The record gives the reactivity of an RNA of 177 nucleotides to DMS and 2A3. The 2A3 profile rests on 3,542 reads. DMS adducts were read by reverse transcription with MarathonRT.

RNA sequence: GGGAACGACUCGAGUAGAGUCGAAAAAGCCCCUGGCGACUUGGCAGGCGAGGGCUGAGGGGGCUGAGUGCUUCCCUUCCAAGUGAAGGCCCCAGCACGGCCAGGGUAGGCUGUGUCCUGCAGAACGACCCAGUAUACCUUUCGAGGUAUACUGGGUAAAAGAAACAACAACAACAAC
Reactivity to DMS in 0.01 (KOAc 150mM, MgCl2 10mM, bicine 150mM(pH8.5), 24C), signal-to-noise 4, nucleotides 027 to 126: a060g010c050c010c000c030u010g010g010c030g020a120c070u000u010g020g010c040a040g000g020c210g020a150g010g000g030c010u000g010a110g020g000g000g020g010c040u000g000a090g020u000g010c040u000u010c070c000c000u000u000c040c050a140a110g010u000g010a100a110g000g000c010c030c010c040a150g000c020a090c060g010g000c000c000a070g010g010g000u010a060g010g000c000u000g010u010g010u000c010c000u000g010c110a120g000a100a120c160g000
Reactivity to 2A3 in 0.01 (KOAc 150mM, MgCl2 10mM, bicine 150mM(pH8.5), 24C), signal-to-noise 3, nucleotides 027 to 126: a010g010c010c010c010c010u020g060g020c020g070a140c040u100u100g110g000c040a040g040g060c040g050a160g030g110g000c030u030g020a050g030g000g030g000g000c040u050g060a080g050u190g010c040u140u200c000c000c020u000u030c130c020a250a040g030u090g250a080a040g020g000c000c000c000c000a000g000c010a010c040g040g010c000c000a050g070g060g040u130a110g030g040c010u010g020u010g020u040c000c000u000g000c000a020g050a090a020c080g010